[RMDB]
RNA sequence: GGGAACGACUCGAGUAGAGUCGAAAAGGGUAGGCUGUUUUCAGUCUACCCGAUGUGCCUGUUUUCAGGCACGGAUAUCAGCCAUCCGAGGGCCGAGGAUGGCCUAUCUGCUGAGCAUUCUGUGUGGAUUGUGAGGCAGUUAGCAGACGCGGCGACAAAUAUGCUAUAUGUUCGCAUAUAGCAUAUUAAAAGAAACAACAACAACAAC
Reactivity to DMS in 0.01 (KOAc 150mM, MgCl2 10mM, bicine 150mM(pH8.5), 24C), signal-to-noise 7, nucleotides 027 to 156: g010g020g040u000a010g020g010c000u000g010u010u000u000u000c030a020g030u000c000u000a010c010c000c000g000a000u000g020u000g010c000c000u000g000u000u000u000u000c020a040g020g040c010a010c010g020g000a160u000a080u000c080a170g020c000c010a030u000c010c010g000a100g020g020g020c020c010g010a180g000g020a080u000g010g010c020c000u000a020u000c020u000g000c000u000g010a300g020c010a030u000u000c000u010g010u010g030u010g010g010a040u000u010g000u000g000a300g010g000c020a030g010u000u000a020g000c080a150g010a140c080g020c050g020g000c020g010a150c080a100
Reactivity to 2A3 in 0.01 (KOAc 150mM, MgCl2 10mM, bicine 150mM(pH8.5), 24C), signal-to-noise 8, nucleotides 027 to 156: g010g000g010u010a000g000g000c000u030g070u180u130u210u300c020a010g000u000c000u000a000c000c000c000g000a000u020g000u000g000c000c000u050g040u130u120u090u300c020a000g000g000c000a000c000g010g010a090u110a050u130c060a000g000c000c000a000u000c000c010g030a180g040g110g000c000c000g000a000g000g000a000u000g000g000c000c000u000a010u000c000u010g000c010u020g010a000g010c000a020u030u000c020u040g280u120g130u300g250g010a010u040u020g000u020g030a030g000g000c000a000g000u000u000a000g010c040a000g030a080c080g010c050g150g000c000g020a010c050a000